[RMDB]
This 177-nucleotide RNA was probed chemically with DMS and 2A3. The reactions ran in a buffer of 150 mM KOAc, 10 mM MgCl2 and 150 mM bicine (pH 8.5), at 24 C. The DMS profile rests on 1,109 reads. For 2A3 the reverse transcriptase was SuperScript II with manganese. Source: RMDB library TTRDES, as collected in RNAgym. Reactivities are given for positions 27 through 126.
RNA sequence: GGGAACGACUCGAGUAGAGUCGAAAAGAUAUGGAUCCCUAGGGUUCAACAGCUUAAUCGGAAACGAUUAAGACAUGAACACCUACAUGGGAUCCUAAGUCAAAAGAGCCUAGUUCGCUAGGCUCAACUGACCAGUAAUCUUCGGAUUACUGGUCAGAAAAGAAACAACAACAACAAC
Reactivity to DMS in 0.01 (KOAc 150mM, MgCl2 10mM, bicine 150mM(pH8.5), 24C), signal-to-noise 2, nucleotides 027 to 126: g030a010u000a300u000g000g000a010u000c000c000c000u010a000g020g070g020u000u000c040a060a120c300a230g000c000u000u000a000a000u010c000g020g000a300a050a270c010g050a010u000u000a010a000g010a010c150a120u010g020a000a000c000a150c000c000u010a060c300a150u000g000g000g010a040u000c000c000u000a000a070g040u000c020a070a060a140a160g000a040g000c010c000u000a000g010u000u000c270g030c010u000a000g000g010c000u010c000a010a100
Reactivity to 2A3 in 0.01 (KOAc 150mM, MgCl2 10mM, bicine 150mM(pH8.5), 24C), signal-to-noise 1, nucleotides 027 to 126: g000a000u070a040u260g000g000a000u010c010c030c000u050a030g000g000g000u020u130c040a140a110c040a250g020c010u000u000a000a000u000c000g070g000a040a080a060c010g000a020u030u030a020a000g010a030c020a030u060g010a050a000c090a300c050c010u050a060c130a280u260g040g000g000a000u000c000c000u000a050a000g130u050c030a030a000a050a200g000a000g000c020c000u000a000g020u050u100c300g000c120u000a000g000g000c000u000c000a000a000